[RMDB]
This 207-nucleotide RNA was probed chemically with DMS and 2A3. The reactions ran in a buffer of 150 mM KOAc, 10 mM MgCl2 and 150 mM bicine (pH 8.5), at 24 C.
RNA sequence: GGGAACGACUCGAGUAGAGUCGAAAACGCGAAUUGCUUGUGUUUGCUGAUUGGUCUUAAAAUAGCAAGCUACGUUGGGAUUGAGUCAGGCAGUUCCAAAAGAGAUUUACUGACUCGCUUGGUCUAGGUUUGAGUUAUGUAUCGAGUUCAAGUUAAAGAUUAUAUUCAGGUUCGCCUGAAUAUAAUCAAAAGAAACAACAACAACAAC
Reactivity to DMS in 0.01 (KOAc 150mM, MgCl2 10mM, bicine 150mM(pH8.5), 24C), signal-to-noise 3, nucleotides 027 to 156: c060g000c040g000a100a140u000u000g010c040u000u010g020u000g040u000u000u000g020c020u010g020a190u000u000g030g010u000c070u000u000a090a090a100a140u000a090g020c040a040a090g010c010u000a060c040g010u000u000g010g000g010a060u000u000g010a060g000u000c030a040g010g020c040a040g020u010u000c020c060a010a050a060a150g010a180g000a120u000u000u000a070c050u000g010a050c010u000c020g020c050u010u000g010g000u000c030u000a060g020g000u010u000u010g000a150g020u000u010a070u000g020u000a060u010c040g000a170g020u000u000c020a040a110g010u010u000a110a070a200
Reactivity to 2A3 in 0.01 (KOAc 150mM, MgCl2 10mM, bicine 150mM(pH8.5), 24C), signal-to-noise 7, nucleotides 027 to 156: c050g030c020g030a030a040u090u090g000c010u020u030g020u010g010u070u050u040g040c030u030g060a240u170u120g080g040u120c060u120u230a120a140a080a070u130a070g010c010a020a020g000c010u020a010c020g000u020u010g020g000g010a030u020u050g010a010g030u010c010a000g000g040c010a000g020u030u020c010c000a000a030a070a010g060a010g010a000u080u180u210a060c010u010g000a000c000u000c030g010c020u010u020g010g010u020c020u030a050g040g050u040u060u130g090a080g030u100u080a110u160g060u020a050u060c040g010a010g010u030u070c020a050a010g000u030u050a070a040a000